Conditions: 150 mM KOAc, 10 mM MgCl2 and 150 mM bicine (pH 8.5), 24 C. This 177-nucleotide RNA was probed chemically with DMS and 2A3. DMS (dimethyl sulfate) methylates the pairing face of unpaired adenines and cytosines. DMS adducts were read by reverse transcription with MarathonRT.
RNA sequence: GGGAACGACUCGAGUAGAGUCGAAAAGAAUGGCCGGAAAUGCCGCAAUAAGUUGUAUGAACUCUGGUGUGAGCUUACAUAUCUAUGGCACAGAGUAAAGCCUAAUCUGGCAGUCCGCUCUGUGCCACACGAUUUAAAUGUUCGCAUUUAAAUCGUGAAAAGAAACAACAACAACAAC
Reactivity to DMS in 0.01 (KOAc 150mM, MgCl2 10mM, bicine 150mM(pH8.5), 24C), signal-to-noise 8, nucleotides 027 to 126: g010a120a100u010g010g020c020c030g010g010a080a100a110u000g010c030c030g010c150a080a070u010a090a090g020u000u000g010u010a060u000g000a080a080c040u000c060u010g010g010u000g020u000g010a090g020c040u000u000a070c110a070u010a070u000c090u000a100u010g010g010c000a010c000a010g000a020g000u000a060a110a150g000c000c010u000a080a140u010c220u000g010g020c010a070g000u000c190c130g010c010u000c000u000g010u000g010c000c000a010
Reactivity to 2A3 in 0.01 (KOAc 150mM, MgCl2 10mM, bicine 150mM(pH8.5), 24C), signal-to-noise 4, nucleotides 027 to 126: g060a040a090u110g010g010c000c060g030g120a050a110a020u090g020c020c030g000c080a020a070u130a160a060g100u100u110g050u090a090u130g070a080a040c010u010c030u050g110g090u080g070u040g050a010g040c000u070u040a010c010a060u120a050u100c080u140a090u040g000g010c000a000c010a010g000a000g000u040a050a000a040g000c010c010u100a170a260u190c120u060g000g000c010a020g100u070c070c030g030c000u000c000u000g000u000g000c000c000a000